RNA sequence: GGGAACGACUCGAGUAGAGUCGAAAAGAUAUGGAGCUGAAUCAAGGGAGCUACUCGGAAACGAGAAUAGCAUCGAUCUUGACAGCUCCUAAGUCAAAAUCGUUGUCAUGUUCGCAUGACAACGAAACGUUAUAUUGGCCUUCGGGCCAAUAUAACGAAAAGAAACAACAACAACAAC
Reactivity to 2A3 in 0.01 (KOAc 150mM, MgCl2 10mM, bicine 150mM(pH8.5), 24C), signal-to-noise 2, nucleotides 027 to 126: g010a000u070a020u090g000g020a010g000c000u000g030a150a190u150c020a030a000g150g220g000a030g010c000u010a020c010u000c000g000g000a070a050a020c010g010a020g060a280a300u030a030g000c030a110u220c050g190a170u030c010u000u000g020a010c000a000g000c000u000c000c000u000a000a010g000u020c000a020a000a050a260u050c010g000u010u010g000u020c000a000u000g030u080u050c250g010c120a000u010g010a000c000a000a000c000g000a010a010a000
Reactivity to DMS in 0.01 (KOAc 150mM, MgCl2 10mM, bicine 150mM(pH8.5), 24C), signal-to-noise 1, nucleotides 027 to 126: g000a040u000a170u010g000g000a010g020c000u000g000a200a160u000c000a030a020g010g020g020a080g000c000u000a060c000u000c000g000g000a050a060a120c000g010a010g000a060a190u010a010g000c000a180u000c060g000a060u010c000u000u020g020a000c000a010g000c000u000c010c000u000a010a130g000u000c000a100a080a060a100u000c010g050u000u000g000u000c000a010u000g000u010u000c270g000c000a010u000g010a000c000a020a000c010g000a000a030a130